[RMDB]
RNA sequence: GGGAACGACUCGAGUAGAGUCGAAAAAUGGUAGUUAGUCUACUCGCUAUCCUAGUUACUUUGGAGUAAUCUAAAGUGUGUGUAAACGGGCGAAAGUCUGUAAAAUACUGGGGAAAUAGGGUCAACAAGAACUAGUAGACCUUCGGGUCUACUAGAAGGAUACCCUAUGAUUCGUCAUAGGGUAUCCAAAAGAAACAACAACAACAAC
Reactivity to 2A3 in 0.01 (KOAc 150mM, MgCl2 10mM, bicine 150mM(pH8.5), 24C), signal-to-noise 3, nucleotides 027 to 156: a000u100g020g020u030a050g010u140u060a060g070u080c020u030a040c020u050c040g000c040u020a040u110c000c010u040a040g030u060u050a000c010u010u020u040g010g000a020g030u100a140a160u030c000u020a040a000a010g010u020g030u030g000u010g020u060a080a110a050c020g000g000g010c020g040a060a020a010g000u000c010u020g030u050a020a040a030a030u110a040c030u020g020g000g020g000a030a070a040u080a040g040g000g020u080c040a020a030c010a180a080g060a080a020c000u000a000g000u000a000g000a000c000c000u060u040c130g040g000g000u000c010u000a000c000u000a010g000a000a010
Reactivity to DMS in 0.01 (KOAc 150mM, MgCl2 10mM, bicine 150mM(pH8.5), 24C), signal-to-noise 2, nucleotides 027 to 156: a100u000g010g020u000a030g020u000u000a080g000u000c030u000a050c020u000c030g020c060u000a070u000c010c000u000a040g020u010u000a020c000u010u010u000g010g000a040g000u000a110a180u000c020u000a040a000a020g010u000g020u010g020u020g010u000a070a150a080c010g010g010g090c000g050a100a100a240g000u020c010u010g020u000a010a030a040a080u010a040c040u000g030g030g020g000a080a090a120u010a040g000g000g010u000c060a060a060c060a090a100g000a100a260c000u010a000g000u000a030g000a010c020c000u000u010c300g060g000g000u000c000u000a010c020u000a000g010a030a080
Conditions: 150 mM KOAc, 10 mM MgCl2 and 150 mM bicine (pH 8.5), 24 C. Structure probing data (2A3 and DMS) for a 207-nucleotide construct. For 2A3, 2,306 sequencing reads were counted. For 2A3 the reverse transcriptase was SuperScript II with manganese.